An RNA of 177 nucleotides, treated with 2A3 and DMS and read out base by base. Values cover nucleotides 27 to 126.
[RMDB]
RNA sequence: GGGAACGACUCGAGUAGAGUCGAAAAGAUAUGGACCAAUCGCUGAUGACCCUGCGUAACAUCAAUCGGAAACGAUUGUGGCAGGCAAGGCGGAGUCCUAAGUCGAAGCCAUUCUUCGGAAUGGCAACGAUAGUUCAAUGUUCGCAUUGAACUAUCGAAAAGAAACAACAACAACAAC
Reactivity to 2A3 in 0.01 (KOAc 150mM, MgCl2 10mM, bicine 150mM(pH8.5), 24C), signal-to-noise 9, nucleotides 027 to 126: g020a020u080a040u140g010g000a010c040c060a120a140u130c030g000c010u060g030a300u160g060a160c020c010c000u010g000c030g100u150a100a070c040a260u300c020a020a010u000c010g040g010a090a040a040c010g000a000u010u010g010u030g030g000c000a000g000g000c010a030a080g000g000c000g000g010a020g010u000c010c000u020a150a030g070u040c040g050a080a000g000c000c000a010u010u000c010u030u050c200g010g010a000a000u000g000g000c010a000a000
Reactivity to DMS in 0.01 (KOAc 150mM, MgCl2 10mM, bicine 150mM(pH8.5), 24C), signal-to-noise 9, nucleotides 027 to 126: g010a030u000a300u000g010g010a020c010c050a140a070u010c010g010c000u000g010a110u010g000a070c300c000c000u000g010c000g000u000a070a120c170a030u010c000a010a000u000c000g000g000a120a100a180c010g010a010u000u000g010u000g000g010c010a000g000g000c030a050a050g000g020c010g010g000a060g000u000c000c000u010a030a130g000u000c010g000a130a160g010c000c000a010u000u000c000u000u010c220g020g010a010a000u000g000g010c010a010a020
About this RNA: It was measured as part of the RMDB library TTRDEL. For DMS, 28,018 sequencing reads were counted.